Record summary:
An RNA of 177 nucleotides, treated with DMS and 2A3 and read out base by base. For 2A3, 1,260 sequencing reads were counted.

RNA sequence: GGGAACGACUCGAGUAGAGUCGAAAACAAUUGAGCGUCGCACACACACAGACUAAGUCUGACACUGACAGAGCCUAAACCGCUCUGUCAGUGUGCGAGAUAUCGUUCUUAAUGAGAGCAGAGGAAAAGUUUGAAUAUGCUUCGGCAUAUUCAAACUAAAAGAAACAACAACAACAAC
Reactivity to DMS in 0.01 (KOAc 150mM, MgCl2 10mM, bicine 150mM(pH8.5), 24C), signal-to-noise 2, nucleotides 027 to 126: c100a080a090u000u000g000a000g010c050g000u010c030g010c010a040c100a120c130a160c150a170c040a000g010a020c030u010a090a200g010u000c000u000g020a110c050a030c110u000g000a020c000a000g010a000g000c000c000u000a070a080a140c300c300g000c000u000c010u000g000u010c000a000g020u000g000u000g020c000g000a030g010a120u030a120u000c020g010u000u000c010u000u000a090a140u000g020a050g000a050g020c020a040g020a050g020g010a050a080a060
Reactivity to 2A3 in 0.01 (KOAc 150mM, MgCl2 10mM, bicine 150mM(pH8.5), 24C), signal-to-noise 1, nucleotides 027 to 126: c010a010a080u020u120g010a020g030c040g010u040c000g000c010a010c000a000c010a010c000a000c020a030g020a000c030u250a300a020g020u000c000u000g050a030c000a020c090u010g000a000c000a020g000a000g000c000c000u030a000a050a060c030c010g000c000u000c020u000g000u000c000a000g000u000g000u000g000c000g000a040g010a000u160a030u130c000g020u050u000c000u020u110a180a140u180g040a020g010a010g140c070a050g000a100g060g090a030a030a040